About this RNA: An RNA of 207 nucleotides, treated with DMS and 2A3 and read out base by base.

RNA sequence: GGGAACGACUCGAGUAGAGUCGAAAAGUCGGAACAUAACGACGGCGUGCCGGUGGGGAAUCAGGGGGCUACCGUGGGAUAGCGAUGAGACAGCCCCUCCGAUGGCACCAAGCGUCGGAUCGCGGAAAACACUGUAAGCCCUUCGGGGCUUACAGAAGUAAAUGUAUUUGUUCGCAAAUACAUUUACAAAAGAAACAACAACAACAAC
Reactivity to DMS in 0.01 (KOAc 150mM, MgCl2 10mM, bicine 150mM(pH8.5), 24C), signal-to-noise 1, nucleotides 027 to 156: g010u020c020g000g000a110a140c120a150u000a110a050c050g010a070c000g040g020c010g020u010g000c030c040g000g000u010g000g070g050g000a190a150u000c020a100g000g000g010g030g100c010u020a020c010c010g040u020g000g040g020a140u000a080g010c010g030a260u000g000a260g010a080c090a060g000c000c000c000c010u010c020c060g030a070u000g030g030c000a050c000c050a040a120g000c000g000u000c010g000g020a100u000c060g010c050g000g010a120a070a050a060c140a180c000u000g000u000a020a010g030c020c000c010u010u020c300g030g000g040g020c010u000u000a000c000a000g010a000a180
Reactivity to 2A3 in 0.01 (KOAc 150mM, MgCl2 10mM, bicine 150mM(pH8.5), 24C), signal-to-noise 3, nucleotides 027 to 156: g050u030c010g050g070a140a090c050a170u160a120a000c030g030a010c010g010g130c050g010u010g030c040c050g020g020u100g030g040g010g040a040a130u110c040a100g000g010g000g070g000c020u030a020c020c020g070u050g020g130g010a080u090a100g030c010g010a070u090g010a030g020a060c030a030g020c010c000c010c020u010c010c020g020a040u080g030g010c010a010c010c000a030a010g040c000g030u070c020g040g010a050u080c050g000c030g110g020a040a040a010a030c060a000c010u000g000u000a000a000g010c010c000c030u020u020c110g040g000g000g000c010u000u000a000c000a000g000a000a000